[RMDB]
RNA sequence: GGGAACGACUCGAGUAGAGUCGAAAAGAUAUGGACCCAUCACCAGGACAAUGAAGCAGAGCUCGGAAACGAGCUCUGGGUUGUCCGGUGAGUGGGUCCUAAGUCAAAACCAUCGUUCGCGAUGGAACUGUAAAAUCAAGUUCGCUUGAUUUUACAGAAAAGAAACAACAACAACAAC
Reactivity to DMS in 0.01 (KOAc 150mM, MgCl2 10mM, bicine 150mM(pH8.5), 24C), signal-to-noise 6, nucleotides 027 to 126: g000a050u000a300u000g010g000a010c000c000c000a070u000c000a010c000c000a200g070g000a020c010a010a020u010g010a160a220g020c010a010g010a010g010c000u000c000g010g000a110a110a210c000g010a000g020c000u000c000u000g000g010g010u000u000g000u000c000c010g000g010u000g000a030g040u010g010g010g010u000c000c010u000a010a070g010u010c040a110a100a110a190c000c000a020u000c010g030u010u020c240g030c030g010a010u000g000g000a040a130
Reactivity to 2A3 in 0.01 (KOAc 150mM, MgCl2 10mM, bicine 150mM(pH8.5), 24C), signal-to-noise 5, nucleotides 027 to 126: g030a020u100a070u180g000g000a000c000c000c000a000u030c000a000c020c030a230g000g010a010c010a020a030u270g170a300a070g250c010a010g000a000g010c000u000c010g050g040a100a090a050c000g010a000g010c000u000c000u010g000g010g000u010u000g000u000c000c000g020g010u000g010a020g140u110g010g000g000u000c010c000u020a010a000g000u000c010a000a000a070a140c010c000a010u010c000g070u110u090c300g000c020g140a000u020g000g030a040a080